Structure probing data (2A3 and DMS) for a 177-nucleotide construct.
It was measured as part of the RMDB library OK2TST.
For DMS the reverse transcriptase was MarathonRT.
The reactions ran in a buffer of 150 mM KOAc, 10 mM MgCl2 and 150 mM bicine (pH 8.5), at 24 C.
RNA sequence: GGGAACGACUCGAGUAGAGUCGAAAAAGAUUGAAUACCACAAAGGUACUGGAUCUGAUAUAUUGAUAACAUCUGUGUCAGGCGCAACUGCAGGUACUAAAUAUUAUGAGAGGUUAAUAAUAACGGGGAUUGAGUUCAAAUUCGUUUGAACUCAAUCAAAAGAAACAACAACAACAAC
Reactivity to 2A3 in 0.01 (KOAc 150mM, MgCl2 10mM, bicine 150mM(pH8.5), 24C), signal-to-noise 3, nucleotides 027 to 126: a000g080a050u130u140g050a110a030u020a090c020c030a040c080a050a160a040g030g000u010a020c030u040g090g040a090u020c020u020g040a010u020a000u020a020u120u150g040a020u060a130a090c030a090u050c010u020g010u020g020u030c020a020g000g000c020g000c070a060a110c050u120g000c030a030g010g010u020a000c010u030a040a080a100u170a100u250u160a120u120g070a040g010a020g080g040u060u070a070a050u090a140a040u130a090a060c030g080g000g000
Reactivity to DMS in 0.01 (KOAc 150mM, MgCl2 10mM, bicine 150mM(pH8.5), 24C), signal-to-noise 4, nucleotides 027 to 126: a070g000a060u000u010g000a100a080u010a080c010c000a100c120a060a100a210g010g010u000a010c040u000g010g020a060u000c020u010g020a090u010a040u000a060u000u000g020a080u000a080a080c070a300u000c050u000g010u010g010u010c010a040g010g020c070g020c090a070a050c110u000g010c040a130g000g010u000a030c050u010a040a050a090u010a030u010u000a060u010g000a080g010a100g000g000u000u000a050a060u010a030a050u010a070a080c100g010g020g020